The record gives the reactivity of an RNA of 177 nucleotides to 2A3. The reactions ran in a buffer of 150 mM KOAc, 10 mM MgCl2 and 150 mM bicine (pH 8.5), at 24 C. For 2A3 the reverse transcriptase was SuperScript II with manganese. Values cover nucleotides 27 to 126.

RNA sequence: GGGAACGACUCGAGUAGAGUCGAAAAAUCUAUCAUCAAGGGAAAGUGCAGGUAAGCUUGACAUUCCGCUUACAGGUAAUGCACGUUCAUCAAUCAGCGAUCAGCCUAUUGUAAGAAUGAGCAAUACAGGACUCACUGGCUUCGGCCAGUGAGUCCUAAAAGAAACAACAACAACAAC
Reactivity to 2A3 in 0.01 (KOAc 150mM, MgCl2 10mM, bicine 150mM(pH8.5), 24C), signal-to-noise 1, nucleotides 027 to 126: a000u000c000u200a020u080c110a000u000c120a050a080g200g000g140a230a020a020g000u000g000c000a000g030g030u000a000a000g000c000u240u000g020a000c300a000u140u160c000c000g000c000u000u000a000c000a000g140g000u140a050a050u000g110c000a000c000g000u200u300c110a070u000c000a150a030u050c000a000g090c090g090a000u090c000a000g000c000c000u110a000u300u170g000u000a240a000g000a110a000u300g000a110g000c000a100a100u190a000c050